[RMDB]
RNA sequence: GGGAACGACUCGAGUAGAGUCGAAAAGAUAUGGAGAUCAGAACUACAUGCCGGUUGCCGGUAAUUCGGGAAGCUCGGAAACGAGCUUCCCGUGCCAGGCAACCAGGCAUGCUGAUCUCCUAAGUCACAUAGAUACAAAGUUCGCUUUGUAUCUAUGAAAAGAAACAACAACAACAAC
Reactivity to DMS in 0.01 (KOAc 150mM, MgCl2 10mM, bicine 150mM(pH8.5), 24C), signal-to-noise 3, nucleotides 027 to 126: g000a060u000a300u020g010g010a010g020a020u000c000a000g010a100a030c100u020a300c000a020u000g030c000c000g010g010u000u000g000c000c000g000g010u000a020a150u020u000c010g000g020g020a060a030g010c000u000c010g000g000a100a110a240c000g040a010g000c000u000u000c000c000c000g010u000g000c010c010a150g040g020c010a020a010c010c000a020g030g000c000a000u000g000c000u000g010a010u000c000u000c000c010u010a000a050g000u000c060a280
Reactivity to 2A3 in 0.01 (KOAc 150mM, MgCl2 10mM, bicine 150mM(pH8.5), 24C), signal-to-noise 1, nucleotides 027 to 126: g010a020u120a040u200g010g000a000g010a000u020c010a000g020a070a070c090u270a090c300a010u000g000c000c020g050g010u030u000g000c050c010g030g050u120a210a300u280u150c010g030g020g010a010a010g000c010u010c040g070g000a200a120a040c000g000a000g010c030u010u000c000c030c010g010u000g010c000c000a070g000g000c010a000a010c000c000a000g000g020c000a000u000g000c000u000g010a000u000c000u000c000c000u000a030a000g000u030c000a000
Description
This 177-nucleotide RNA was probed chemically with DMS and 2A3. The reactions ran in a buffer of 150 mM KOAc, 10 mM MgCl2 and 150 mM bicine (pH 8.5), at 24 C. 2A3 adducts were read by reverse transcription with SuperScript II with manganese.